Structure probing data (2A3) for a 207-nucleotide construct.
It was measured as part of the RMDB library VIROID.

[RMDB]
RNA sequence: GGGAACGACUCGAGUAGAGUCGAAAACCUGCCUCUCCUUGUCGGUGAAUUCUCCCCUGGAAGGUCUCUUCCUAGGUCCGGAGUCUACCUCCAUCUGGUCUGUUCGGGCCCUCUUCGUCGGGGGAGCCCCCUCUCCAUCCUUAUCCUUCUUUCCAAGGCCAUAACGUAUGUUCGCAUACGUUAUGGCAAAAGAAACAACAACAACAAC
Reactivity to 2A3 in 0.01 (KOAc 150mM, MgCl2 10mM, bicine 150mM(pH8.5), 24C), signal-to-noise 1, nucleotides 027 to 156: c000c000u010g040c000c020u070c000u020c010c000u000u140g070u090c050g070g000u120g090a090a110u210u010c030u020c000c040c020c000u000g030g000a000a010g100g040u030c070u020c020u180u050c000c010u050a030g030g030u050c040c030g000g000a020g040u010c030u070a060c000c010u110c070c020a140u070c160u130g080g010u100c040u080g120u060u010c020g000g020g000c000c000c000u060c030u090u000c050g190u070c070g020g010g000g010g000a000g000c010c000c000c000c000u000c000u000c000c000a060u020c020c020u060u040a030u030c020c010u060u070c020u020u000u000c060c080a060a030g090